Background: This 207-nucleotide RNA was probed chemically with DMS and 2A3.
RNA sequence: GGGAACGACUCGAGUAGAGUCGAAAAGACAACAAGCCGAAAAUUUGGCUAAUUGGGCUAAAAAAGGCGCUUUGAUUGGAAUCACUGGACGUAUCCAGACUCGUAGCUAUGAAAACCAACAGGGGCAACGAGUGUAUGUGACAGAGGUAGUCGCUGAGUCUCUAAAUAAGUUCGCUUAUUUAGAGACAAAAGAAACAACAACAACAAC
Reactivity to DMS in 0.01 (KOAc 150mM, MgCl2 10mM, bicine 150mM(pH8.5), 24C), signal-to-noise 2, nucleotides 027 to 156: g030a210c050a070a120c060a100a090g000c000c010g060a080a080a120a180u000u000u010g010g020c010u000a070a190u010u010g030g000g010c030u000a000a050a010a110a100a280g000g010c060g040c080u000u010u000g010a190u000u010g000g000a120a100u000c030a040c060u020g000g010a130c200g000u000a100u010c010c100a100g010a040c010u000c030g010u010a100g000c070u000a170u040g000a030a050a040a170c040c080a080a140c100a150g000g040g000g020c030a040a030c020g020a070g030u000g030u000a040u000g040u020g010a050c050a130g000a130g020g000u010a110g040u010c010g000c010u000g000a300
Reactivity to 2A3 in 0.01 (KOAc 150mM, MgCl2 10mM, bicine 150mM(pH8.5), 24C), signal-to-noise 3, nucleotides 027 to 156: g060a000c020a080a010c010a070a010g000c000c000g070a060a120a090a130u090u060u070g010g000c000u020a040a040u220u200g110g020g010c020u060a040a000a010a040a060a000g070g000c100g020c090u120u110u060g090a170u040u110g080g060a140a080u050c010a070c050u010g030g030a020c070g120u120a090u050c040c000a020g020a060c000u010c030g020u020a060g000c010u040a040u190g090a140a090a100a060c030c010a020a080c020a090g110g050g020g000c010a010a020c000g000a030g000u020g030u040a080u110g060u040g000a010c040a050g070a030g130g000u100a030g020u070c030g010c020u040g010a020

For 2A3 the reverse transcriptase was SuperScript II with manganese.